Structure probing data (DMS and 2A3) for a 177-nucleotide construct.
For 2A3, 4,594 sequencing reads were counted.
Source: RMDB library OK2TST, as collected in RNAgym.
Conditions: 150 mM KOAc, 10 mM MgCl2 and 150 mM bicine (pH 8.5), 24 C.
RNA sequence: GGGAACGACUCGAGUAGAGUCGAAAACCUCGAGGAGAUCAAGGACCUCGAGGACCUCAAGGAGUACCUCCAAGAGCGCGAUCCGGAGGAGCGUGUGAGACGGCUCGUUGAGGAGGCCGGCAUAACGCCGAAUGGAAAUUUUCGAAUUUCCAUUCGGAAAAGAAACAACAACAACAAC
Reactivity to DMS in 0.01 (KOAc 150mM, MgCl2 10mM, bicine 150mM(pH8.5), 24C), signal-to-noise 5, nucleotides 027 to 126: c010c000u010c010g010a020g000g000a080g010a090u010c290a150a220g010g020a130c010c000u000c000g000a020g010g000a070c020c010u000c020a040a110g000g020a040g010u010a110c070c030u000c010c050a090a160g010a150g000c060g010c030g000a100u000c040c040g020g020a170g010g000a120g010c020g000u000g010u010g010a140g030a090c140g020g010c010u000c010g000u000u020g000a070g000g010a090g000g010c020c010g000g010c080a050u010a070a050c180g010
Reactivity to 2A3 in 0.01 (KOAc 150mM, MgCl2 10mM, bicine 150mM(pH8.5), 24C), signal-to-noise 4, nucleotides 027 to 126: c010c000u000c010g000a010g020g020a100g000a080u170c100a090a080g110g060a070c000c000u000c010g000a000g000g010a060c010c010u020c020a020a020g060g000a030g030u090a180c010c000u000c030c000a090a060g110a040g100c030g000c020g040a050u050c020c040g070g090a150g010g000a000g020c030g000u050g020u080g030a090g020a050c060g020g020c010u020c030g230u030u030g010a030g020g010a010g020g060c040c020g030g040c070a110u120a130a020c050g020

Background: Values cover nucleotides 27 to 126. DMS adducts were read by reverse transcription with MarathonRT.